Source information: The record gives the reactivity of an RNA of 207 nucleotides to 2A3. The reactions ran in a buffer of 150 mM KOAc, 10 mM MgCl2 and 150 mM bicine (pH 8.5), at 24 C. For 2A3, 718 sequencing reads were counted.
RNA sequence: GGGAACGACUCGAGUAGAGUCGAAAAGCGUAACGGCUGGGUGUAACCCAACUCUAGGUGUGCUGAUUAGCGGGCUUGACUCCGUAACCAAUAGGCACUGGUGGUAAAAAGCAUCCCACCUACUCACAAAGCUCCAAAUUCUUCGGAAUUUGGAGAAGGAUUAUCCUGUCUUCGGACAGGAUAAUCCAAAAGAAACAACAACAACAAC
Reactivity to 2A3 in 0.01 (KOAc 150mM, MgCl2 10mM, bicine 150mM(pH8.5), 24C), signal-to-noise 1, nucleotides 027 to 156: g040c050g020u030a000a050c060g080g010c000u020g040g020g000u070g060u040a060a070c000c020c040a010a030c030u040c020u120a060g010g020u030g010u040g050c010u020g020a070u120u030a040g020c050g010g020g040c050u130u140g020a110c020u000c100c030g010u040a050a050c030c000a060a180u060a110g070g000c030a020c010u020g020g000u030g010g010u050a020a110a000a000a070g040c020a040u050c030c000c000a000c000c010u070a080c020u020c050a030c070a080a160a030g010c010u000c000c000a000a010a010u010u010c010u030u050c150g150g000a010a010u010u000u000g020g010a000g010a000a000